[RMDB]
An RNA of 177 nucleotides, treated with DMS and 2A3 and read out base by base.
RNA sequence: GGGAACGACUCGAGUAGAGUCGAAAAAGACUGUGGGAUGAUAAUACUGUGUAUAGCAGCACUUGUAAUAACCAAAUUAGCAGCAGGAGACAGAUCAGGUCUUACAGCAGUAAUUAGGAGGGCAAACACCAUGCUUUACUUUCGAGUAAAGCAUGGUAAAAGAAACAACAACAACAAC
Reactivity to DMS in 0.01 (KOAc 150mM, MgCl2 10mM, bicine 150mM(pH8.5), 24C), signal-to-noise 3, nucleotides 027 to 126: a040g010a120c040u010g020u000g010g000g010a070u010g010a100u000a050a110u000a060c060u020g020u000g000u010a050u000a070g010c080a120g000c020a080c050u000u010g010u010a040a060u010a050a170c130c070a050a040a070u010u020a130g000c060a050g010c070a050g000g000a130g010a040c070a090g000a050u010c110a050g000g010u000c050u000u000a060c080a080g010c030a070g020u010a050a080u000u000a090g000g000a110g010g010g000c110a060a070a110c190
Reactivity to 2A3 in 0.01 (KOAc 150mM, MgCl2 10mM, bicine 150mM(pH8.5), 24C), signal-to-noise 2, nucleotides 027 to 126: a010g050a030c040u020g010u050g030g020g020a070u050g050a050u060a210a030u080a160c030u030g000u010g030u120a050u030a190g000c040a010g000c000a010c020u010u080g040u050a120a110u040a100a160c050c020a050a060a110u150u100a110g000c030a020g010c020a020g040g070a050g030a020c020a010g040a040u130c040a020g000g150u010c020u020u040a020c010a030g000c010a000g030u080a070a000u050u090a040g050g000a010g020g030g030c030a040a040a030c040